[RMDB]
RNA sequence: GGGAACGACUCGAGUAGAGUCGAAAAGUCAAGAUGUGUAGGAUAGGUCGGAGGCUUUGAAGUGUGGACGCCAGUCUGCAUGGAGCCGACCUUGAAAUACCACCCUUUAAUGGAAAAACAAAGUGAAGUAAAUAUGAAACUUCGGUUUCAUAUUUACAAAAGAAACAACAACAACAAC
Reactivity to 2A3 in 0.01 (KOAc 150mM, MgCl2 10mM, bicine 150mM(pH8.5), 24C), signal-to-noise 3, nucleotides 027 to 126: g110u060c050a040a020g060a220u120g120u030g030u080a010g020g010a010u010a030g020g010u010c040g000g120a100g110g070c060u200u140u160g030a070a010g000u000g000u020g010g000a000c010g070c100c010a030g010u000c010u000g000c000a000u020g000g010a010g000c000c010g000a000c000c000u000u000g010a010a000a000u020a010c010c000a050c010c010c020u080u080u060a160a150u150g050g030a110a080a020a020a000c070a060a120a030g090u100g090a130a030
Reactivity to DMS in 0.01 (KOAc 150mM, MgCl2 10mM, bicine 150mM(pH8.5), 24C), signal-to-noise 4, nucleotides 027 to 126: g030u000c090a080a080g000a060u010g020u010g030u010a030g000g000a180u000a020g010g020u000c000g010g010a170g010g020c100u010u000u010g010a150a160g000u000g010u000g000g000a010c010g000c190c200a110g010u000c010u000g000c010a000u000g010g000a120g010c000c000g010a000c010c010u010u000g000a120a160a090u000a020c020c000a070c040c040c030u010u010u010a070a070u010g010g000a070a040a080a110a060c130a080a070a090g010u010g010a080a130